[RMDB]
RNA sequence: GGGAACGACUCGAGUAGAGUCGAAAAGCCUUACGAUUCGUCGUAAGGCAUACAAAGUUUUGCCACUAUGAGCCCGCAGCGUUGGUGCUCCCACGCGGUGCAAUACGACGGAUUUCGAUCCGUCGAACGUUUAAAAGAUCUUCGGAUCUUUUAAACGAAAAGAAACAACAACAACAAC
Reactivity to DMS in 0.01 (KOAc 150mM, MgCl2 10mM, bicine 150mM(pH8.5), 24C), signal-to-noise 5, nucleotides 027 to 126: g010c000c000u000u000a010c000g000a020u000u020c200g030u000c000g020u000a000a000g000g010c000a010u000a030c120a080a110a100g010u000u000u000u010g000c040c030a090c080u010a070u000g000a120g020c020c020c020g020c060a120g030c090g000u010u010g030g020u010g000c120u000c040c010c020a090c100g010c020g000g010u000g000c070a070a060u010a140c020g010a020c000g010g000a010u000u010u000c150g000a040u000c000c000g010u000c000g010a030a050
Reactivity to 2A3 in 0.01 (KOAc 150mM, MgCl2 10mM, bicine 150mM(pH8.5), 24C), signal-to-noise 4, nucleotides 027 to 126: g000c000c000u010u000a000c000g010a020u020u060c180g040u000c000g000u120a000a010g000g010c000a000u030a010c020a010a120a020g010u010u020u120u160g060c000c020a040c040u110a060u200g050a040g080c020c020c020g030c030a030g030c030g050u110u140g050g010u140g060c040u100c020c000c000a040c030g010c020g030g030u080g020c020a040a080u100a110c010g000a000c000g000g010a000u050u070u100c170g060a010u000c010c000g000u000c000g000a000a000
This 177-nucleotide RNA was probed chemically with DMS and 2A3. For DMS, 7,736 sequencing reads were counted. Reactivities are given for positions 27 through 126. The 2A3 profile rests on 7,462 reads. It was measured as part of the RMDB library M2PK50. The RNA was probed in 150 mM KOAc, 10 mM MgCl2 and 150 mM bicine (pH 8.5) at 24 C.